[RMDB]
RNA sequence: GGGAACGACUCGAGUAGAGUCGAAAAUUCAAUCAUUCAGAAUUGGUAAAUGCAGAAGCAGCAAAAUAACCAAAAGUAAUGACUUUCGUUUUAAUUUCUUAAGAUGAAAUAUAAAUGAAAACCUGUUGAUGAUCAUAUACUUCGGUAUAUGAUCAUCAAAAGAAACAACAACAACAAC
Reactivity to 2A3 in 0.01 (KOAc 150mM, MgCl2 10mM, bicine 150mM(pH8.5), 24C), signal-to-noise 5, nucleotides 027 to 126: u060u020c020a010a090u020c000a010u020u040c030a020g120a210a260u040u010g000g000u010a030a070a030u030g000c010a020g050a300a090g070c100a010g010c030a050a060a120a220u090a080a090c010c000a040a010a000a020g140u170a010a040u010g020a040c020u010u020u000c000g070u010u010u000u030a080a100u030u030u000c020u030u100a090a090g060a180u170g010a010a010a000u080a000u020a020a050a030u010g010a000a010a020a060c020c020u070g030u050u000
This 177-nucleotide RNA was probed chemically with 2A3.